An RNA of 177 nucleotides, treated with DMS and 2A3 and read out base by base. The reactions ran in a buffer of 150 mM KOAc, 10 mM MgCl2 and 150 mM bicine (pH 8.5), at 24 C.
RNA sequence: GGGAACGACUCGAGUAGAGUCGAAAACAUCAGUCGUUCGCGACUGAUGAAACGUGCAAGCGCUGCACGAAAAAGUCGAUCGAAUACCGAUCGACAAGCGCAAAAGAUAGGCCUUCGGGCCUAUCAACAUAGGAAACGUCUUCGGACGUUUCCUAUGAAAAGAAACAACAACAACAAC
Reactivity to DMS in 0.01 (KOAc 150mM, MgCl2 10mM, bicine 150mM(pH8.5), 24C), signal-to-noise 2, nucleotides 027 to 126: c010a010u000c000a000g000u010c000g030u000u010c260g020c000g030a000c000u000g010a000u000g010a070a100a130c000g010u010g000c000a060a060g010c000g000c000u000g000c010a020c000g000a000a050a060a070a060g010u000c010g010a020u000c010g060a260a150u030a160c160c000g000a000u000c000g020a000c010a010a020g000c000g000c000a110a100a130a090g000a010u010a010g010g030c000c000u000u000c180g010g010g010c010c010u000a000u000c000a030a130
Reactivity to 2A3 in 0.01 (KOAc 150mM, MgCl2 10mM, bicine 150mM(pH8.5), 24C), signal-to-noise 2, nucleotides 027 to 126: c000a010u000c000a000g000u000c010g030u060u090c230g000c020g080a000c000u010g000a000u000g000a000a000a000c000g000u010g000c030a160a140g010c030g000c000u000g000c010a000c020g180a070a020a000a000a000g000u010c000g010a000u000c000g000a080a060u140a300c140c000g000a000u000c000g010a000c000a010a000g000c000g000c000a000a060a000a070g000a000u000a000g000g010c000c040u040u110c300g070g000g000c000c000u010a000u000c000a000a000
Record summary:
Values are in units of 0.01, from 0 to 300, in steps of 10. Source: RMDB library M2PK50, as collected in RNAgym.